RNA sequence: GGGAACGACUCGAGUAGAGUCGAAAAGAUAUGGAUCCUGUACCCAUCAUUUGAGUCGGAAACGACGAGAUGGUACACGGGAUCCUAAGUCAAAAGCUUGCGAUAAACUUCGGUUUAUCGCAAGCAACACAUUAGUUCGGUUCGCCGAACUAAUGUGAAAAGAAACAACAACAACAAC
Reactivity to 2A3 in 0.01 (KOAc 150mM, MgCl2 10mM, bicine 150mM(pH8.5), 24C), signal-to-noise 3, nucleotides 027 to 126: g030a010u100a060u190g010g000a000u000c000c010u010g010u040a050c010c030c010a000u000c050a090u110u130u300g130a050g000u010c030g000g040a110a060a080c000g020a000c010g010a020g000a010u010g000g030u070a060c100a010c160g000g000g000a000u010c000c000u000a030a030g060u020c040a060a000a070a160g010c000u000u000g000c000g010a010u000a000a010a000c010u030u120c300g110g000u040u010u000a000u000c010g030c000a010a010g010c000a000a000
Reactivity to DMS in 0.01 (KOAc 150mM, MgCl2 10mM, bicine 150mM(pH8.5), 24C), signal-to-noise 5, nucleotides 027 to 126: g020a060u010a300u010g000g000a000u000c000c010u000g010u000a120c300c000c000a010u010c000a300u000u010u020g000a160g000u000c000g000g000a130a080a190c010g020a000c000g000a100g000a010u000g000g010u000a050c170a030c060g020g000g000a010u000c000c000u000a000a070g000u000c030a090a110a110a150g010c000u000u010g000c000g010a010u000a010a000a010c000u000u020c190g010g000u000u000u000a000u000c000g000c000a000a000g020c000a030a050
An RNA of 177 nucleotides, treated with 2A3 and DMS and read out base by base.
The RNA was probed in 150 mM KOAc, 10 mM MgCl2 and 150 mM bicine (pH 8.5) at 24 C.
For DMS, 4,769 sequencing reads were counted.
Reactivities are rounded to 0.1 and cut off at 0 and 3.
High 2A3 reactivity points to a flexible backbone, as in loops and unpaired stretches.
For 2A3, 7,198 sequencing reads were counted.